Description:
Conditions: 150 mM KOAc, 10 mM MgCl2 and 150 mM bicine (pH 8.5), 24 C. An RNA of 177 nucleotides, treated with 2A3 and read out base by base. The data come from the RNA Mapping Database (RMDB), library OK1LIB.

RNA sequence: GGGAACGACUCGAGUAGAGUCGAAAAAAGUUUGAUUCUUUAUCGGAUCAUAAAAACCCACUUUCUGAAGAUCUUUUCCUUCUCUUCGGGAUCGAACAUCAAUUGCAACGAUUCGAUAGACGGCUCAGCACUGCACCCAAUUCGUUGGGUGCAGUGCAAAAGAAACAACAACAACAAC
Reactivity to 2A3 in 0.01 (KOAc 150mM, MgCl2 10mM, bicine 150mM(pH8.5), 24C), signal-to-noise 1, nucleotides 027 to 126: a000a000g170u110u040u030g000a000u010u000c000u000u180u000a150u250c120g010g010a000u000c000a030u070a130a160a000a080a020c000c000c090a080c140u040u090u020c080u070g090a070a030g050a120u000c030u060u080u000u000c050c000u080u080c080u010c000u120u050c080g070g000g040a040u030c010g100a070a030c000a010u240c030a030a250u180u120g000c000a000a060c110g010a140u080u010c000g100a010u000a000g040a100c000g000g000c000u000c190a000